[RMDB]
RNA sequence: GGGAACGACUCGAGUAGAGUCGAAAAAGAUGUUCGCAUCUCAAAUAACCUUUGUGGACCUGGAGUACAGUAGAUUCAUCCCAGCACCCAUUGGGUGCUGUGAGAUGAUGCUGUACGUUGAAAGGUCCACUCUGGUGCGCUGGCAGUUCGCUGCCAAUAUCUGUUCACGAUUCGUCGUGAACAGAUAAAAAGAAACAACAACAACAAC
Reactivity to 2A3 in 0.01 (KOAc 150mM, MgCl2 10mM, bicine 150mM(pH8.5), 24C), signal-to-noise 5, nucleotides 027 to 156: a000g040a050u070g000u120u160c240g040c040a000u010c040u060c110a100a130a190u190a070a040c010c000u020u000u020g000u000g000g000a000c010c000u020g000g020a050g010u000a000c000a000g010u050a060g040a300u060u040c000a010u000c000c000c000a010g000c000a010c000c000c130a300u250u300g010g000g000u000g000c010u010g030u040g000a190g000a000u010g000a000u000g000c000u000g000u000a000c010g010u060u010g000a010a020a000g000g000u010c000c000a000c000u000c000u000g000g000u030g000c080g010c100u050g010g000c000a020g030u060u140c180g070c100u000g000c010c000a000a010
Reactivity to DMS in 0.01 (KOAc 150mM, MgCl2 10mM, bicine 150mM(pH8.5), 24C), signal-to-noise 2, nucleotides 027 to 156: a070g020a050u000g000u000u000c180g030c020a120u000c000u000c040a080a130a170u000a070a100c000c020u000u000u000g040u000g030g020a020c030c010u010g010g010a300g040u000a020c010a020g020u000a040g010a150u010u010c000a030u000c010c020c010a030g030c010a020c000c000c020a300u000u010g050g040g000u000g010c010u000g010u010g000a210g020a000u000g000a020u000g010c010u000g010u010a000c010g020u000u010g000a090a190a050g000g020u010c000c010a000c000u000c000u000g030g030u000g000c080g010c100u000g000g030c030a030g010u000u000c250g040c000u000g000c000c010a030a260